[RMDB]
RNA sequence: GGGAACGACUCGAGUAGAGUCGAAAAGAUAGCUCAGAGAUAGGAUGAGUUAAGAAAGGAAGCUAGAAGUCGUUCAUGGAAGGGAAGAGAAUCAGCAAAUAGUAAAAUUCACACACUAACCAGAAAGUACUUAGUCCCUAUGCCAAUAUUGAACCAACGAUCCCUUUUAUUUCGAUAAAAGGGAUCGAAAAGAAACAACAACAACAAC
Reactivity to DMS in 0.01 (KOAc 150mM, MgCl2 10mM, bicine 150mM(pH8.5), 24C), signal-to-noise 2, nucleotides 027 to 156: g040a140u000a100g020c040u010c020a050g000a270g020a170u010a020g010g020a150u020g000a090g090u000u010a110a080g020a100a120a040g040g020a070a070g020c020u000a070g010a040a060g000u000c060g040u000u010c010a110u010g000g010a090a040g020g010g020a090a050g000a130g000a060a070u010c060a070g000c060a040a080a070u000a070g020u000a030a000a060a150u020u000c040a050c080a070c160a090c020u000a020a090c090c030a130g000a040a040a130g000u000a060c020u000u000a110g020u010c010c010c000u030a070u000g000c000c040a060a150u010a070u000u000g010a040a150c060c010a050a110